[RMDB]
RNA sequence: GGGAACGACUCGAGUAGAGUCGAAAAGCGCGACGUCCUGCGCGGCGAACACGACGCCCACUAUGCUGGUCGGUGUCGCCGCCGCCACGAGGGAUGGCAAGAGCGGCGGCAGCGCAAGGUUCGCCGCCCGCCACGCUGCGUUCGCGCAGCGUGGCGGAAAAGAAACAACAACAACAAC
Reactivity to 2A3 in 0.01 (KOAc 150mM, MgCl2 10mM, bicine 150mM(pH8.5), 24C), signal-to-noise 2, nucleotides 027 to 126: g000c000g000c000g070a070c020g060u030c020c040u060g030c040g000c040g030g000c000g010a010a000c110a000c200g150a030c050g010c000c060c000a040c030u210a100u300g150c090u040g020g070u220c060g030g130u010g000u000c000g000c010c000g040c000c010g010c000c000a040c020g070a170g100g090g000a130u000g010g000c000a190a080g030a000g060c010g000g000c000g000g000c000a010g030c030g020c040a020a040g060g030u000u000c000g000c000c000g000c000
Chemical mapping of a 177-nucleotide RNA with 2A3. The data come from the RNA Mapping Database (RMDB), library OK1LIB.